[RMDB]
RNA sequence: GGGAACGACUCGAGUAGAGUCGAAAAAGAACAUUCUCCUUAAUCAAUAGACAUGCUAUUGACUUUCUACUCACAAGAUGGGGAGGAACAUGCAAAGUGCUUGGACCUGAUUGUUGCAUCGGGAUAGUACCCUACGCUAGUUCGCUAGCGUAGGGUAAAAAGAAACAACAACAACAAC
Reactivity to DMS in 0.01 (KOAc 150mM, MgCl2 10mM, bicine 150mM(pH8.5), 24C), signal-to-noise 2, nucleotides 027 to 126: a040g000a070a180c170a090u030u010c030u010c010c050u060u000a060a110u010c020a000a030u020a030g000a170c270a150u040g000c000u010a090u010u000g010a050c150u000u020u000c000u000a080c020u020c000a120c170a000a020g000a090u000g000g000g020g000a020g000g000a020a010c140a100u070g060c090a050a080a110g020u000g020c000u000u010g090g000a190c010c020u000g010a050u000u000g040u000u020g010c110a050u000c100g000g000g000a040u040a050g000
Reactivity to 2A3 in 0.01 (KOAc 150mM, MgCl2 10mM, bicine 150mM(pH8.5), 24C), signal-to-noise 2, nucleotides 027 to 126: a000g030a050a000c030a030u130u000c010u040c060c000u110u160a130a140u010c000a000a070u000a000g060a040c040a040u250g160c020u000a010u000u030g050a000c000u100u090u000c000u000a090c040u040c070a020c070a090a260g050a270u190g040g040g000g070a010g050g000a080a080c010a040u050g000c070a020a040a080g010u170g010c000u000u070g050g010a090c000c000u030g050a120u000u110g170u140u110g000c010a040u070c050g000g000g000a000u040a020g000
The record gives the reactivity of an RNA of 177 nucleotides to DMS and 2A3. The RNA was probed in 150 mM KOAc, 10 mM MgCl2 and 150 mM bicine (pH 8.5) at 24 C. The DMS profile rests on 1,998 reads. For DMS the reverse transcriptase was MarathonRT.